[RMDB]
RNA sequence: GGGAACGACUCGAGUAGAGUCGAAAAAGGGAAGAUCGAAAGAGGCUUUUAUGUAGCCUGCAAAUGCCUAGAAUGUGACAUGCUCGGGUAUAUGCAUAGUGUGUCCUGUUGGAAGCCAGAGUGCAGAUCACUAGUGCCACUUCGGUGGCACUAGUGAAAAAGAAACAACAACAACAAC
Reactivity to 2A3 in 0.01 (KOAc 150mM, MgCl2 10mM, bicine 150mM(pH8.5), 24C), signal-to-noise 2, nucleotides 027 to 126: a050g060g050g070a080a050g060a120u250c160g090a040a050a090g150a070g030g030c060u100u100u040u010a150u300g220u300a000g000c000c020u100g050c010a000a000a080u140g000c000c110u040a040g130a030a110u190g050u120g120a000c020a000u120g030c000u000c010g040g060g000u060a140u000a000u070g020c050a050u030a110g040u040g040u020g010u210c020c020u040g010u080u000g030g030a010a010g020c010c010a040g040a040g230u100g020c010a000g030a020
Reactivity to DMS in 0.01 (KOAc 150mM, MgCl2 10mM, bicine 150mM(pH8.5), 24C), signal-to-noise 2, nucleotides 027 to 126: a010g010g000g010a020a100g000a100u020c080g030a120a130a100g000a010g000g010c030u000u000u000u050a110u040g020u010a060g040c000c010u040g060c070a000a030a060u050g010c010c010u030a060g030a090a040u020g020u030g000a020c060a070u000g020c020u000c060g000g000g010u010a030u050a090u030g010c060a060u030a110g000u060g040u010g020u010c030c010u000g000u030u000g010g000a040a110g000c010c080a100g000a130g000u030g000c040a010g000a160
Description: This 177-nucleotide RNA was probed chemically with 2A3 and DMS. The reactions ran in a buffer of 150 mM KOAc, 10 mM MgCl2 and 150 mM bicine (pH 8.5), at 24 C. The DMS profile rests on 3,028 reads.